RNA sequence: GGGAACGACUCGAGUAGAGUCGAAAAUGAUAUACCUUCGCCUCUUUAGAGUAAGGACGAUCUUCAGAGUUGAGUCUUUGAUCUUAAUUUUUUUUAAGACUAAUUCAAAGUACUCGUAGUAUAGAACCACGUCUGCGAAUUUCGAUUCGCAGACGUGAAAAGAAACAACAACAACAAC
Reactivity to 2A3 in 0.01 (KOAc 150mM, MgCl2 10mM, bicine 150mM(pH8.5), 24C), signal-to-noise 1, nucleotides 027 to 126: u090g090a000u000a000u000a110c000c000u000u110c030g020c000c000u000c120u170u080u040a070g140a040g000u110a070a010g240g060a100c110g020a030u000c040u120u080c060a050g020a000g100u060u040g020a000g000u000c000u000u000u000g070a030u000c000u020u000a110a200u050u020u140u120u090u050u000u140a020a030g000a020c040u140a110a190u000u020c000a000a040a060g030u060a060c000u000c000g000u000a000g000u000a000u000a040g060a010a010c010